[RMDB]
RNA sequence: GGGAACGACUCGAGUAGAGUCGAAAAGAUAUGGAAGUGGAACUACUCAGAUAAGGUCGAAGAACAAUUACAAAGUCGGAAACGACUUUGUAAUUGGGAGACCGAAACUGAGCCACUUCCUAAGUCACUAUGGAGUGUAGUUCGCUACACUCCAUAGAAAAGAAACAACAACAACAAC
Reactivity to 2A3 in 0.01 (KOAc 150mM, MgCl2 10mM, bicine 150mM(pH8.5), 24C), signal-to-noise 1, nucleotides 027 to 126: g020a000u060a030u160g000g000a010a030g010u020g020g010a070a110c180u300a070c000u300c020a000g000a070u080a120a040g050g000u010c040g040a130a050g070a300a050c010a020a000u000u000a000c000a000a000a000g000u020c010g050g000a090a130a070c020g000a000c010u010u000u000g000u000a000a000u000u020g000g000g000a020g000a000c000c000g000a010a020a000c000u000g000a000g000c000c000a000c000u000u010c000c000u000a000a000g010u000c000a000
Reactivity to DMS in 0.01 (KOAc 150mM, MgCl2 10mM, bicine 150mM(pH8.5), 24C), signal-to-noise 3, nucleotides 027 to 126: g010a050u000a300u000g010g010a010a000g030u000g020g000a060a010c050u010a300c010u000c010a020g010a090u010a110a290g000g010u020c010g000a160a210g020a190a210c000a000a010u000u010a000c000a000a000a000g010u000c010g010g000a100a060a200c000g010a000c000u000u000u000g000u000a000a000u000u010g000g000g000a190g010a000c000c010g000a020a080a190c000u000g010a000g010c000c000a000c010u010u000c000c000u000a000a020g020u000c030a300